[RMDB]
RNA sequence: GGGAACGACUCGAGUAGAGUCGAAAAGGGACGCCUUUAGAAGAAGAGGCUAGGUGGUAUUCCGGUGUGGGAUACUUGGUAAUAUGUAACGCGAAUUGCAUAAGAUUGUAGGACGGAAUUUACAGUCAAAACGGUCCUGCGUUCGCGCAGGACCGAACACUUCCCACUCCUUCGGGAGUGGGAAGUGAAAAGAAACAACAACAACAAC
Reactivity to 2A3 in 0.01 (KOAc 150mM, MgCl2 10mM, bicine 150mM(pH8.5), 24C), signal-to-noise 1, nucleotides 027 to 156: g060g020g020a050c050g040c020c000u130u070u130a300g030a300a060g030a030a000g010a020g030g030c090u060a030g020g080u070g010g000u070a020u090u050c050c050g050g030u250g020u100g050g010g000a000u030a010c000u020u100g020g000u050a030a000u030a030u180g070u060a030a020c060g040c060g170a060a060u080u020g000c020a020u020a030a110g020a050u030u030g020u030a030g050g100a010c040g060g010a040a040u050u190u170a080c040a020g040u060c060a020a000a030a070c010g000g010u000c000c000u000g000c060g000u010u020c260g020c010g000c040a000g000g000a000c000c000g000a000a000